[RMDB]
RNA sequence: GGGAACGACUCGAGUAGAGUCGAAAAGAAUAUAAGAGCGCAGUAAUUGUGAGAGCAAACUGCGCCCGGACUGUAGGAUCCGGUGGCACAGCAACGCUCAUUCACAACACGCUGUGCCACUUGAAGAACUAGCAUGAUUAUUCGUAAUCAUGCUAGUAAAAGAAACAACAACAACAAC
Reactivity to 2A3 in 0.01 (KOAc 150mM, MgCl2 10mM, bicine 150mM(pH8.5), 24C), signal-to-noise 9, nucleotides 027 to 126: g020a040a030u200a010u070a090a050g020a020g000c000g000c000a010g010u110a220a150u030u020g010u030g050a090g000a000g050c010a010a030a060c000u000g000c000g000c000c000c000g010g010a020c040u130g080u240a060g030g100a070u000c010c010g010g000u020g000g000c000a000c000a010g000c010a060a110c100g040c050u070c050a080u240u190c070a050c040a160a140c040a020c140g000c000u000g000u000g000c000c000a010c000u030u060g050a070a040g040a050
Reactivity to DMS in 0.01 (KOAc 150mM, MgCl2 10mM, bicine 150mM(pH8.5), 24C), signal-to-noise 6, nucleotides 027 to 126: g030a130a100u040a070u020a080a050g000a100g000c000g000c000a010g020u000a070a080u010u010g030u010g000a220g010a180g000c000a030a050a070c000u000g000c000g010c000c000c010g000g000a040c180u020g020u020a080g010g000a180u010c010c030g010g020u020g010g000c010a010c000a000g010c000a130a120c190g000c140u020c110a130u040u040c210a140c250a060a050c170a090c190g020c000u000g000u000g000c000c010a000c000u010u020g010a090a080g000a080